The record gives the reactivity of an RNA of 177 nucleotides to 2A3 and DMS. For 2A3, 1,105 sequencing reads were counted. It was measured as part of the RMDB library M2PK90. As a SHAPE reagent, 2A3 marks flexible, mostly unpaired nucleotides at the ribose 2'-OH.

[RMDB]
RNA sequence: GGGAACGACUCGAGUAGAGUCGAAAAAUAAAUCCCGGUCCCGUCAGACAAGCAGGAGGAGGGAACUUUCUAGGGAAACCACUCCCUCAAACCUUCUCUUCCGAAAAAGAGGGAGGAAAGAAAAAAACAUAAGGUAUGACUUCGGUCAUACCUUAUGAAAAGAAACAACAACAACAAC
Reactivity to 2A3 in 0.01 (KOAc 150mM, MgCl2 10mM, bicine 150mM(pH8.5), 24C), signal-to-noise 1, nucleotides 027 to 126: a000u060a030a040a020u000c000c020c000g010g060u010c010c000c000g090u050c070a010g050a120c070a110a020g060c070a020g050g000a010g000g010a000g000g000g000a040a020c020u160u130u100c130u170a030g010g010g050a100a040a000c010c010a050c050u000c010c000c000u030c010a040a170a060c000c000u040u040c010u070c000u150u090c070c060g100a050a090a000a000a090g090a010g040g040g070a020g030g000a140a060a000g030a000a150a060a000a050a000a010
Reactivity to DMS in 0.01 (KOAc 150mM, MgCl2 10mM, bicine 150mM(pH8.5), 24C), signal-to-noise 2, nucleotides 027 to 126: a090u010a040a100a160u010c000c020c000g040g010u000c000c010c000g000u010c150a060g010a040c120a050a080g000c120a070g030g030a060g000g010a050g000g020g010a050a070c110u000u010u000c030u000a050g010g020g010a030a060a120c050c120a150c050u000c020c010c000u010c050a040a100a220c040c030u000u000c000u000c030u020u010c050c080g000a030a100a050a050a090g010a030g000g000g000a010g010g000a020a090a100g020a000a000a070a090a030a080a100